[RMDB]
RNA sequence: GGGAACGACUCGAGUAGAGUCGAAAAGUGAGACCCUUCGGGGUCUCACAAAGAACGCUGCAGCGAGCAGCACGGAGAGAACCGAACACGCAGGCAAUAAAAAAAGAUCACAGUUCGCUGUGAUCAACUAUCAGUAAAACUUCGGUUUUACUGAUAGAAAAGAAACAACAACAACAAC
Reactivity to DMS in 0.01 (KOAc 150mM, MgCl2 10mM, bicine 150mM(pH8.5), 24C), signal-to-noise 3, nucleotides 027 to 126: g010u000g010a010g000a010c010c000c000u000u000c210g050g060g030g020u000c000u020c000a010c000a030a060a110g020a110a090c120g010c020u000g000c020a150g010c100g010a140g030c010a020g020c030a100c050g020g000a090g010a090g010a060a090c040c030g000a080a050c060a040c060g010c050a050g000g010c060a080a050u050a030a010a090a050a050a090a120g000a010u000c000a010c000a000g010u000u000c180g020c000u000g010u000g000a000u010c000a030a120
Reactivity to 2A3 in 0.01 (KOAc 150mM, MgCl2 10mM, bicine 150mM(pH8.5), 24C), signal-to-noise 3, nucleotides 027 to 126: g000u010g000a000g000a010c000c000c070u010u070c260g000g000g000g000u000c000u000c000a000c000a010a000a000g010a050a010c080g000c020u020g000c020a090g080c040g190a060g040c020a000g020c020a010c000g050g010a090g000a010g010a060a040c030c020g020a060a030c040a010c080g040c030a020g060g020c020a050a070u200a210a170a020a010a000a000a030g000a000u000c000a000c000a000g030u060u080c140g040c080u000g000u000g000a000u000c000a010a000
Structure probing data (DMS and 2A3) for a 177-nucleotide construct. For DMS the reverse transcriptase was MarathonRT. The RNA was probed in 150 mM KOAc, 10 mM MgCl2 and 150 mM bicine (pH 8.5) at 24 C. High 2A3 reactivity points to a flexible backbone, as in loops and unpaired stretches. The 2A3 profile rests on 5,460 reads. 2A3 adducts were read by reverse transcription with SuperScript II with manganese.